The record gives the reactivity of an RNA of 177 nucleotides to 2A3 and DMS.
The DMS profile rests on 7,464 reads.
Reactivities are given for positions 27 through 126.
For 2A3, 5,163 sequencing reads were counted.
2A3 adducts were read by reverse transcription with SuperScript II with manganese.
The RNA was probed in 150 mM KOAc, 10 mM MgCl2 and 150 mM bicine (pH 8.5) at 24 C.
Source: RMDB library OK1LIB, as collected in RNAgym.
[RMDB]
RNA sequence: GGGAACGACUCGAGUAGAGUCGAAAACACAGCAGAGCUGCAGCCGCACAAGGAAAGCAUGGUAGUUGGAUCGGCCGUCGUGUCACCGUCGUGCAAUAUGGUCGGUUUCAGAUGGUGCCACACAUUCGGAUAUGACUAGGUUCGCCUAGUCAUAUCCAAAAGAAACAACAACAACAAC
Reactivity to 2A3 in 0.01 (KOAc 150mM, MgCl2 10mM, bicine 150mM(pH8.5), 24C), signal-to-noise 6, nucleotides 027 to 126: c060a010c020a000g080c030a020g020a020g080c010u040g010c020a030g020c010c010g070c020a050c020a080a050g070g020a190a020a010g070c020a030u060g050g020u070a110g030u050u090g050g040a090u040c020g040g010c030c000g050u080c040g050u020g020u030c020a010c010c010g050u080c030g040u030g030c020a060a030u090a070u130g160g000u100c030g020g020u020u040u070c020a000g000a020u040g020g050u050g040c010c000a030c000a010c010a040u160u170c090
Reactivity to DMS in 0.01 (KOAc 150mM, MgCl2 10mM, bicine 150mM(pH8.5), 24C), signal-to-noise 3, nucleotides 027 to 126: c060a080c120a100g020c110a070g010a090g020c030u020g010c060a090g020c000c010g030c050a060c110a070a070g020g010a070a040a090g000c060a030u010g000g010u040a050g020u010u020g000g010a070u020c060g020g010c030c040g000u020c090g000u000g010u010c010a020c040c060g010u000c030g050u000g000c120a060a080u000a080u030g000g010u000c010g020g000u010u000u000c040a010g010a040u000g000g000u000g000c000c000a050c060a080c100a120u010u020c190